[RMDB]
RNA sequence: GGGAACGACUCGAGUAGAGUCGAAAAGAGUAUGAGGUCGAUAGAGAAAUAGAUGUAAAACAAGAAAAUGUAGUUUAUGAACAUGUAAAAAAUGAGGACGUUAUACUUAUAGAGUCAUGUUGGAAGAAUAUGCUUAAACAAAUUAAAAAAGAUAAAAUCCAUAUAAUGGGUUCGCCCAUUAUAUGGAAAAAGAAACAACAACAACAAC
Reactivity to DMS in 0.01 (KOAc 150mM, MgCl2 10mM, bicine 150mM(pH8.5), 24C), signal-to-noise 1, nucleotides 027 to 156: g000a050g020u020a060u000g000a070g030g070u030c050g020a160u000a200g010a230g000a100a090a130u010a070g000a080u000g000u000a110a090a130a180c000a030a210g030a140a030a150a160u000g020u000a100g070u000u000u000a070u030g000a100a040c130a020u000g030u000a000a000a000a000a060a070u000g020a110g100g010a050c030g010u020u030a110u010a070c030u000u020a080u000a110g000a140g020u000c070a030u000g000u000u000g020g010a040a110g000a060a070u050a110u000g000c100u010u000a080a100a050c020a070a020a130u080u100a020a070a070a070a110a090g020a240u000a050a070a050a150